[RMDB]
RNA sequence: GGGAACGACUCGAGUAGAGUCGAAAAUCUGCCUUCGAAACACCAUCGAUCGUCCCUUCUUCUUUACCUUCCUUCUGGCUCUUCCGUGGAGACGCGUCCGGUGGCACCCCUGCUCGGUUCGCUCCAACCUGCUUUUGUCUAUCUGCGCCUCUGCCGCGACACAUUGACAGUUCGCUGUCAAUGUGUCAAAAGAAACAACAACAACAAC
Reactivity to 2A3 in 0.01 (KOAc 150mM, MgCl2 10mM, bicine 150mM(pH8.5), 24C), signal-to-noise 2, nucleotides 027 to 156: u060c070u100g100c020c030u050u040c030g020a100a000a050c040a050c020c020a070u000c050g020a010u020c010g000u000c000c000c010u020u060c050u050u000c000u090u100u070a150c020c010u040u130c030c000u020u080c050u080g040g030c000u010c090u130u080c040c050g070u080g050g030a100g000a100c000g020c030g130u080c030c060g020g030u020g060g010c010a070c020c000c020c000u020g020c030u050c060g050g000u090u070c010g000c000u020c010c010a020a060c020c020u060g000c000u070u060u090u100g080u000c010u040a080u050c040u050g000c000g030c020c020u040c020u060g030c010c010g080c020